[RMDB]
RNA sequence: GGGAACGACUCGAGUAGAGUCGAAAAGGCGCCCAGCGCCUCGACGAUCGCUUCGGGAUCGGCGUCGAGGUCCAGCAGCCGUCGGCAACGUGCAGUGGCCGUCAUCAGGUCGCGGAAAUCAUCGAGCGUACUGCGUACAGUUCGCUGUACGCAGUACAAAAGAAACAACAACAACAAC
Reactivity to 2A3 in 0.01 (KOAc 150mM, MgCl2 10mM, bicine 150mM(pH8.5), 24C), signal-to-noise 3, nucleotides 027 to 126: g040g000c030g030c030c010c030a040g020c020g020c020c000u000c000g010a020c000g090a240u120c020g000c140u200u160c110g100g000g060a100u040c000g040g020c020g010u010c010g010a010g000g000u050c030c030a050g000c010a000g010c000c010g050u040c030g030g000c000a030a030c050g060u210g040c090a070g060u040g050g000c000c020g020u050c030a160u150c040a050g000g060u030c030g000c030g050g050a050a070a030u110c060a050u060c030g040a000g070c070
Reactivity to DMS in 0.01 (KOAc 150mM, MgCl2 10mM, bicine 150mM(pH8.5), 24C), signal-to-noise 3, nucleotides 027 to 126: g030g030c030g010c020c030c060a200g020c170g000c000c000u000c000g000a060c010g000a040u000c030g010c150u010u010c180g010g010g000a140u000c010g000g010c010g010u000c010g000a030g000g010u000c090c100a090g000c090a090g010c030c030g000u000c050g010g020c010a090a050c100g000u010g020c130a170g000u000g000g040c010c030g000u010c120a120u020c140a120g040g000u000c040g030c010g010g000a100a050a060u000c050a120u000c040g010a140g010c180